An RNA of 177 nucleotides, treated with DMS and 2A3 and read out base by base. The RNA was probed in 150 mM KOAc, 10 mM MgCl2 and 150 mM bicine (pH 8.5) at 24 C. High DMS reactivity at an A or C suggests that its Watson-Crick edge is free. It was measured as part of the RMDB library OK1LIB.
RNA sequence: GGGAACGACUCGAGUAGAGUCGAAAAGAAAUAAUGGAGCUGUGCAAGAGUUCAAUAAGCACCUUGACUAUACUAACGUUGAUGAAUUAUCUACGAACUUCACAAACACUUAUAGGAAAGGUGUAAAGGCAUUAGAUUUCUUCGGAAAUCUAAUGCCAAAAGAAACAACAACAACAAC
Reactivity to DMS in 0.01 (KOAc 150mM, MgCl2 10mM, bicine 150mM(pH8.5), 24C), signal-to-noise 1, nucleotides 027 to 126: g000a070a030a060u070a000a030u010g000g000a010g030c000u000g080u050g000c190a300a030g000a000g000u030u030c060a070a150u000a090a080g000c010a010c000c000u000u000g000a300c000u000a000u000a000c170u060a170a300c190g000u040u000g010a160u000g030a000a000u000u000a040u060c060u020a150c190g000a070a010c300u000u000c000a030c280a070a000a060c070a090c160u000u000a000u040a000g000g000a220a000a000g000g000u050g000u000a000a020a110
Reactivity to 2A3 in 0.01 (KOAc 150mM, MgCl2 10mM, bicine 150mM(pH8.5), 24C), signal-to-noise 2, nucleotides 027 to 126: g000a000a060a020u140a040a040u070g050g010a010g040c000u010g030u130g170c080a080a000g080a020g130u130u020c020a030a040u200a080a000g000c000a000c010c000u000u000g010a010c000u000a000u070a030c060u140a150a040c080g020u010u040g000a160u010g050a050a170u130u100a100u080c040u060a040c090g130a120a010c050u020u010c030a010c090a030a080a000c000a000c000u000u040a000u000a000g000g000a020a000a000g050g000u000g010u030a020a000a010